[RMDB]
RNA sequence: GGGAACGACUCGAGUAGAGUCGAAAAAUAUCAUCGGAUCAACGAUCGUCGAUACGAAAUGCGUCAAGAAUCUAGAGAUUAGCGUUCGUAUAGGAGACAUGUGCAAGGAAUCAUCUGAACUUGAGGUCAAGGAUGGAUUCAAGUAUGUCGACGGAUCUAACAUCGUAGGGUUCGCCCUACGAUGUUAAAAAGAAACAACAACAACAAC
Reactivity to 2A3 in 0.01 (KOAc 150mM, MgCl2 10mM, bicine 150mM(pH8.5), 24C), signal-to-noise 5, nucleotides 027 to 156: a000u140a050u120c080a050u100c040g100g010a070u120c090a080a070c050g050a060u040c030g040u030c030g010a000u000a010c010g040a020a060a040u100g020c020g050u060c070a070a130g090a180a130u110c090u150a100g020a020g000a130u060u090a010g010c000g010u000u000c000g000u000a020u030a060g030g090a080g010a020c010a020u070g020u050g070c030a060a060g150g010a020a000u030c000a010u000c020u030g020a060a060c030u070u150g070a050g090g080u090c060a060a020g050g000a020u030g010g060a000u010u010c000a020a000g050u050a030u040g030u000c000g010a000c020g050g030a010u000c010
Reactivity to DMS in 0.01 (KOAc 150mM, MgCl2 10mM, bicine 150mM(pH8.5), 24C), signal-to-noise 3, nucleotides 027 to 156: a130u000a050u000c060a050u000c070g010g000a100u010c060a100a080c050g010a040u010c060g060u000c010g010a030u000a000c050g000a060a050a020u010g030c010g020u000c100a060a110g020a100a090u000c060u030a190g010a230g000a120u000u010a120g030c020g050u000u000c030g020u000a040u000a060g020g010a240g020a060c020a020u000g010u000g030c050a050a220g000g020a060a070u000c010a030u000c020u010g000a050a090c050u010u010g020a080g000g000u010c030a090a260g030g010a060u000g000g010a020u000u000c030a000a140g020u000a060u000g020u000c010g000a150c050g010g010a130u010c030
Structure probing data (2A3 and DMS) for a 207-nucleotide construct. 2A3 adducts were read by reverse transcription with SuperScript II with manganese. For DMS the reverse transcriptase was MarathonRT. The RNA was probed in 150 mM KOAc, 10 mM MgCl2 and 150 mM bicine (pH 8.5) at 24 C. The DMS profile rests on 4,561 reads.